[RMDB]
Notes
The record gives the reactivity of an RNA of 177 nucleotides to 2A3 and DMS. The 2A3 profile rests on 28,712 reads. For 2A3 the reverse transcriptase was SuperScript II with manganese. The RNA was probed in 150 mM KOAc, 10 mM MgCl2 and 150 mM bicine (pH 8.5) at 24 C. Source: RMDB library OK1LIB, as collected in RNAgym. DMS adducts were read by reverse transcription with MarathonRT.

RNA sequence: GGGAACGACUCGAGUAGAGUCGAAAAGGUGGCUCGUACACCGCUGUGAAGAGUGCCCUCUACGAGUCACCGAUUUAGCAUGUUCGUCCUACGAAAGAGGCUCUCAAGCAGUAGGACGUUCAUGCGAGGGAUGGUGUACCUUCGGGUAUACCAUCCCAAAAGAAACAACAACAACAAC
Reactivity to 2A3 in 0.01 (KOAc 150mM, MgCl2 10mM, bicine 150mM(pH8.5), 24C), signal-to-noise 9, nucleotides 027 to 126: g020g000u010g000g000c000u000c000g000u010a010c050a030c050c010g030c040u070g040u050g140a150a140g090a020g080u080g020c030c010c000u020c010u010a000c000g000a000g000u010c000a000c010c000g000a000u010u010u060a020g000c000a000u010g000u000u000c000g000u000c000c000u000a000c020g070a080a100a070g190a050g160g030c010u030c020u010c090a150a030g010c020a020g010u000a000g000g000a000c000g000u000u000c000a000u000g000c000g000a130
Reactivity to DMS in 0.01 (KOAc 150mM, MgCl2 10mM, bicine 150mM(pH8.5), 24C), signal-to-noise 5, nucleotides 027 to 126: g000g020u010g000g000c000u000c010g010u000a020c120a050c060c020g000c030u000g000u040g010a190a080g000a080g020u000g000c090c030c070u010c180u010a000c000g010a000g000u000c000a000c000c000g010a030u020u030u020a150g000c000a010u000g000u000u000c020g010u000c010c010u000a010c000g010a130a130a090g010a090g000g020c090u040c090u020c060a140a140g010c170a160g030u000a000g000g010a000c010g010u000u000c010a010u010g000c000g000a070